The record gives the reactivity of an RNA of 207 nucleotides to 2A3 and DMS. For 2A3 the reverse transcriptase was SuperScript II with manganese. The DMS profile rests on 7,640 reads.
RNA sequence: GGGAACGACUCGAGUAGAGUCGAAAAUGGAAUCGACGUCUCUUCUAAGAACGAAAGGUUAAAGCAGGUCGAGGUCGAAGAUGGACUCGUACUCUCCACUUCAUUGCUUGAUUGCAUGCUAAUCAGAUUCUUCCUUUCUCUCGCCGGGUAGCCGUUGGCAAAAGAUAUACUUCGGUAUAUCUUUUGCAAAAGAAACAACAACAACAAC
Reactivity to 2A3 in 0.01 (KOAc 150mM, MgCl2 10mM, bicine 150mM(pH8.5), 24C), signal-to-noise 7, nucleotides 027 to 156: u090g020g020a010a040u050c020g040a040c020g050u000c030u000c000u270u120c080u170a170a090g010a050a020c060g060a120a060a050g040g000u070u060a120a060a000g000c020a010g000g020u040c020g020a010g030g070u220c300g020a020a010g080a150u040g010g010a010c040u040c130g060u140a110c060u040c010u010c050c010a020c000u030u030c020a060u030u300g090c000u020u040g010a040u030u050g040c060a070u030g000c040u040a040a030u030c020a030g010a110u040u020c000u030u060c010c020u020u060u000c030u000c010u000c010g030c010c000g010g010g010u010a030g040c010c020g030u040u040g060
Reactivity to DMS in 0.01 (KOAc 150mM, MgCl2 10mM, bicine 150mM(pH8.5), 24C), signal-to-noise 3, nucleotides 027 to 156: u000g000g010a150a070u010c020g000a050c030g020u000c020u000c030u000u020c060u010a080a110g010a070a090c050g010a060a060a110g010g000u010u000a060a070a040g030c030a080g000g000u000c040g010a050g030g020u000c060g020a040a080g000a160u010g020g010a030c020u000c150g000u000a080c090u000c040u000c020c030a060c020u010u000c030a200u000u000g010c050u000u010g000a100u010u010g020c030a080u010g010c030u000a040a080u000c040a120g000a180u000u000c010u000u010c030c030u000u000u000c000u010c020u000c030g030c030c030g000g000g000u000a060g010c020c030g020u020u000g000
Reactivities are given for positions 27 through 156. The RNA was probed in 150 mM KOAc, 10 mM MgCl2 and 150 mM bicine (pH 8.5) at 24 C.